[RMDB]
Conditions: 150 mM KOAc, 10 mM MgCl2 and 150 mM bicine (pH 8.5), 24 C. The record gives the reactivity of an RNA of 177 nucleotides to 2A3 and DMS. For DMS the reverse transcriptase was MarathonRT. The DMS profile rests on 2,546 reads.

RNA sequence: GGGAACGACUCGAGUAGAGUCGAAAAGGCCGACAGAGUAGGUGGUGGUCUUCUGCUCCAGUUUGGUUUGUGGCUCCGCUGAGCUGGCGGAAGGCAUAACGAAAAUAAGCGCGAGGAACAGCGGCGCAGCCUUAUGCGCCUUCGGGCGCAUAAGGCUAAAAGAAACAACAACAACAAC
Reactivity to 2A3 in 0.01 (KOAc 150mM, MgCl2 10mM, bicine 150mM(pH8.5), 24C), signal-to-noise 3, nucleotides 027 to 126: g030g020c000c010g040a030c060a040g110a000g110u040a020g040g120u090g090g070u120g040g000u040c040u020u000c010u000g100c040u030c020c000a010g030u000u030u050g180g000u050u070u210g150u090g060g000c020u020c030c000g000c020u000g000a000g050c070u110g010g000c000g000g040a050a020g020g020c000a000u050a100a030c090g100a130a000a020a010u210a180a020g020c000g000c040g040a070g100g010a070a010c050a080g090c040g050g000c000g060c020
Reactivity to DMS in 0.01 (KOAc 150mM, MgCl2 10mM, bicine 150mM(pH8.5), 24C), signal-to-noise 2, nucleotides 027 to 126: g000g010c010c010g020a070c100a100g010a100g000u000a060g010g020u000g100g000u030g000g020u000c030u020u000c020u010g000c110u010c030c060a030g000u000u010u010g000g000u010u000u030g000u000g010g000c000u010c000c050g000c020u010g010a070g020c060u020g000g000c000g040g000a000a080g010g020c030a040u050a090a080c090g010a100a040a030a070u010a040a140g030c090g000c010g000a100g000g000a070a120c170a050g000c060g000g030c090g000c120